[RMDB]
RNA sequence: GGGAACGACUCGAGUAGAGUCGAAAAUAUCAUGUUAUGUUACUGCUGCUACAGUGAAUCCCCCUGUGCGGUGGGGUGUAAUUGGUUAUCAAUGGAAACAGCUGUUUGUUUGCCACACGAGUCACGGAGGUAACCUUCAUUUCGAUGAAGGUUACCUAAAAGAAACAACAACAACAAC
Reactivity to DMS in 0.01 (KOAc 150mM, MgCl2 10mM, bicine 150mM(pH8.5), 24C), signal-to-noise 3, nucleotides 027 to 126: u040a060u010c080a050u000g010u000u010a050u020g000u000u020a060c030u010g010c010u010g000c040u000a030c020a050g010u010g010a140a090u010c010c020c010c130c030u000g010u000g000c080g000g000u020g040g020g000g000u040g010u010a050a010u000u000g000g000u040u010a070u000c060a040a110u020g000g000a130a050a090c030a120g010c130u010g010u020u010u020g010u000u000u000g000c050c010a060c080a080c040g000a090g000u010c020a080c090g000g000
Reactivity to 2A3 in 0.01 (KOAc 150mM, MgCl2 10mM, bicine 150mM(pH8.5), 24C), signal-to-noise 2, nucleotides 027 to 126: u100a040u130c060a050u090g180u110u100a090u070g080u040u110a160c100u010g020c010u050g000c000u050a020c000a030g000u030g040a040a120u030c060c010c000c000c010u020g000u050g050c010g060g060u040g000g000g000g050u010g000u010a010a020u000u090g090g000u030u120a100u070c040a160a060u000g040g020a080a030a010c020a030g050c000u010g100u020u170u040g070u000u030u030g060c000c000a030c030a030c120g000a010g000u000c010a020c040g070g070